[RMDB]
RNA sequence: GGGAACGACUCGAGUAGAGUCGAAAAUCAAACCCGCCCUUGUAGCUCAGUGGUAGAGCGCUUCACUCGUAUUCCAAUACUGCCAUGAAGAGGUCCGCGGUUGAAUCCCGCGUGGUGGCAAAAAAAAGUGAAGUCAUAAGUUCGCUUAUGACUUCACAAAAGAAACAACAACAACAAC
Reactivity to DMS in 0.01 (KOAc 150mM, MgCl2 10mM, bicine 150mM(pH8.5), 24C), signal-to-noise 2, nucleotides 027 to 126: u000c130a060a120a110c030c020c000g000c020c020c000u010u000g030u010a070g010c020u000c110a080g030u000g000g010u000a070g000a070g010c040g040c010u000u000c040a080c020u030c010g010u010a060u010u010c050c050a160a140u010a070c080u000g020c030c030a010u000g030a070a070g010a110g000g000u000c100c020g010c030g000g000u000u020g010a090a260u000c300c000c010g000c000g020u000g020g000u000g010g040c040a010a000a000a040a060a010a090a050
Reactivity to 2A3 in 0.01 (KOAc 150mM, MgCl2 10mM, bicine 150mM(pH8.5), 24C), signal-to-noise 1, nucleotides 027 to 126: u100c000a000a030a090c010c030c010g050c060c010c000u070u090g140u090a040g020c030u030c080a050g050u020g160g010u140a040g080a050g000c010g010c000u110u060c010a050c010u080c000g040u070a110u060u060c030c030a040a030u050a150c060u040g000c010c030a030u060g090a100a090g050a010g060g070u010c010c010g000c000g050g000u050u030g090a120a040u030c020c000c010g000c010g000u000g040g040u010g050g000c000a150a050a000a000a000a100a000a000

The record gives the reactivity of an RNA of 177 nucleotides to DMS and 2A3. Reactivities are given for positions 27 through 126. 2A3 adducts were read by reverse transcription with SuperScript II with manganese. The RNA was probed in 150 mM KOAc, 10 mM MgCl2 and 150 mM bicine (pH 8.5) at 24 C. It was measured as part of the RMDB library M2PK90.